[RMDB]
RNA sequence: GGGAACGACUCGAGUAGAGUCGAAAAUGGAGGGCAAGUCUGGUGCCAGCAGCCGCGGUAAUACCAGCUCCAAUAGCGUAUAUUAUUGAUGUUGCAGUUAAAAAGUUCGUAGUUUGACUUUGCCUGUCGUAUAUCGCAUAUUCGUAUGCGAUAUACGAAAAGAAACAACAACAACAAC
Reactivity to 2A3 in 0.01 (KOAc 150mM, MgCl2 10mM, bicine 150mM(pH8.5), 24C), signal-to-noise 7, nucleotides 027 to 126: u110g050g030a040g030g010g020c030a050a000g020u010c040u040g040g020u040g020c040c020a020g000c010a010g020c010c030g020c020g020g000u020a030a020u030a060c040c020a020g020c010u080c080c040a110a120u130a100g020c030g060u120a040u010a020u180u040a040u020u080g040a050u020g040u050u020g010c040a060g030u130u180a110a110a040a030a040g050u090u100c050g020u040a080g060u040u090u150g020a020c000u040u020u060g020c000c000u030g020u010
Reactivity to DMS in 0.01 (KOAc 150mM, MgCl2 10mM, bicine 150mM(pH8.5), 24C), signal-to-noise 4, nucleotides 027 to 126: u010g030g000a070g020g030g030c020a060a030g010u010c010u010g000g010u010g030c030c070a140g010c030a090g000c000c060g010c040g000g000u010a020a040u040a100c140c160a300g000c010u010c100c170a100a100u030a040g010c040g000u040a170u010a030u010u000a030u010u000g010a040u010g000u000u000g020c050a090g000u000u040a040a040a090a070a060g000u010u010c110g010u010a050g000u010u020u010g010a050c070u000u000u010g010c040c010u010g010u000
Chemical mapping of a 177-nucleotide RNA with 2A3 and DMS. The data come from the RNA Mapping Database (RMDB), libraries RFM100 and RFMREP. The reactions ran in a buffer of 150 mM KOAc, 10 mM MgCl2 and 150 mM bicine (pH 8.5), at 24 C.